The data come from the RNA Mapping Database (RMDB), library OK2TST.
This 177-nucleotide RNA was probed chemically with 2A3 and DMS.
The 2A3 profile rests on 1,633 reads.
For DMS, 3,206 sequencing reads were counted.
DMS adducts were read by reverse transcription with MarathonRT.
Values cover nucleotides 27 to 126.
High DMS reactivity at an A or C suggests that its Watson-Crick edge is free.
Reactivities are rounded to 0.1 and cut off at 0 and 3.
Conditions: 150 mM KOAc, 10 mM MgCl2 and 150 mM bicine (pH 8.5), 24 C.
RNA sequence: GGGAACGACUCGAGUAGAGUCGAAAAAAGGGCAGUCUUGUGGGACUGAGCCCUUAGUCUGUGACAUCUGAUUCUAUUUCCUGGUAAAUAGUGUCAGGAUUAACUUAAUUGUAGCACAGCCAGCUGGGCUAAAUCAGGGGUUCGCCCCUGAUUUAGCAAAAGAAACAACAACAACAAC
Reactivity to 2A3 in 0.01 (KOAc 150mM, MgCl2 10mM, bicine 150mM(pH8.5), 24C), signal-to-noise 2, nucleotides 027 to 126: a010a000g020g020g000c020a010g040u020c010u070u190g100u230g100g050g010a000c000u010g060a030g050c000c010c030u020u000a020g000u000c030u020g040u040g050a050c000a060u030c010u010g010a010u020u000c000u000a020u000u020u010c080c200u210g120g000u140a020a020a010u020a010g000u000g030u000c010a010g030g020a040u100u060a020a060c010u030u090a060a030u270u060g010u090a040g010c010a000c000a020g000c010c010a030g010c040u170g010g100
Reactivity to DMS in 0.01 (KOAc 150mM, MgCl2 10mM, bicine 150mM(pH8.5), 24C), signal-to-noise 3, nucleotides 027 to 126: a040a010g010g010g020c000a030g010u000c000u000u000g030u030g030g010g010a030c000u000g000a120g020c000c000c000u000u000a020g010u010c020u000g010u000g010a110c180a100u000c010u010g000a010u010u000c000u010a000u000u000u000c030c210u020g040g020u010a010a010a010u000a020g020u000g000u010c010a020g000g000a120u000u000a090a070c060u000u000a040a110u000u000g010u000a150g010c000a020c020a020g040c040c090a100g000c150u000g030g010